[RMDB]
RNA sequence: GGGAACGACUCGAGUAGAGUCGAAAAGCGCUGAAAAGCGCCUUCGGGCAGUGCCUUCGUCUCCGGCGGUGGCAACGGGGCAGCAGCAGGCUGUCCCCAUCCUGCCUACAGCCAUCGUCGUGCUGGAAGCUAAUCCGCUAUUCGUAGCGGAUUAGCUAAAAGAAACAACAACAACAAC
Reactivity to 2A3 in 0.01 (KOAc 150mM, MgCl2 10mM, bicine 150mM(pH8.5), 24C), signal-to-noise 3, nucleotides 027 to 126: g030c020g010c030u020g040a030a040a000a020g040c000g020c000c000u040u050c020g000g020g020c050a050g060u050g090c000c010u110u150c050g060u050c060u040c080c010g010g000c010g010g010u000g000g000c010a050a050c060g000g020g020g000c010a000g000c020a030g070c040a070g290g140c050u080g050u240c000c010c000c000a060u080c010c000u030g030c000c000u040a070c080a010g000c000c000a030u030c020g040u010c010g020u040g120c010u030g000g020a060
Reactivity to DMS in 0.01 (KOAc 150mM, MgCl2 10mM, bicine 150mM(pH8.5), 24C), signal-to-noise 2, nucleotides 027 to 126: g020c020g000c000u000g010a160a120a070a030g020c000g020c000c050u000u020c110g000g010g020c070a150g040u030g000c020c000u020u000c060g010u000c070u000c020c030g040g000c000g000g000u000g020g000c060a110a040c300g010g020g000g010c030a050g000c000a250g000c280a100g060g000c000u000g000u000c000c000c000c070a040u040c070c020u000g000c050c000u010a020c040a210g020c010c000a010u010c010g000u000c090g000u020g000c060u000g000g000a300
The data come from the RNA Mapping Database (RMDB), library OK1LIB. The record gives the reactivity of an RNA of 177 nucleotides to 2A3 and DMS. For DMS, 2,160 sequencing reads were counted. For DMS the reverse transcriptase was MarathonRT. Values cover nucleotides 27 to 126.